RNA sequence: GGGAACGACUCGAGUAGAGUCGAAAAUGGCUUCGACAGGAGUAAGUCUGCUUAGAUGGCAUGUCGCUUUGGGCAAAGCGUAAAAAGCCCAAAUAAAAUUAAACGCAAACAACGUUAAAUUCGCUCCUGCUUACGCUAAAGCUGCGUAAGUUCAGUUAAAAGAUGUGUAGUUCGCUACACAUCUUUUAAAAGAAACAACAACAACAAC
Reactivity to 2A3 in 0.01 (KOAc 150mM, MgCl2 10mM, bicine 150mM(pH8.5), 24C), signal-to-noise 2, nucleotides 027 to 156: u070g030g090c080u000u020c070g080a030c030a040g020g000a040g030u060a020a040g040u040c030u020g030c020u060u040a040g030a100u160g000g000c040a070u080g100u150c020g010c010u010u030u030g000g000g000c050a100a200a000g010c000g110u160a050a010a000a010a000g000c000c010c000a030a000a000u010a020a000a000a000u060u080a030a020a010c030g010c090a150a020a000c020a100a060c030g030u030u080a030a070a050u190u080c110g000c050u000c000c000u000g050c010u000u000a010c010g020c000u060a160a090a090g120c120u090g000c020g000u000a010a000g000u070u070c030a040g000u010u010
Reactivity to DMS in 0.01 (KOAc 150mM, MgCl2 10mM, bicine 150mM(pH8.5), 24C), signal-to-noise 1, nucleotides 027 to 156: u000g020g000c010u010u000c070g090a040c010a030g010g010a090g010u000a100a080g020u010c020u000g010c040u000u000a070g020a080u010g020g020c020a130u010g010u000c060g030c090u000u020u000g020g020g030c020a070a030a090g000c040g030u000a050a020a100a050a090g020c020c030c010a080a060a140u060a040a140a080a090u000u000a090a050a040c010g030c030a100a130a140c090a060a050c050g020u000u010a070a040a150u000u000c070g000c040u000c040c000u000g010c020u000u010a070c030g000c010u000a100a140a250g060c130u020g050c000g000u000a120a300g100u000u000c050a080g010u020u000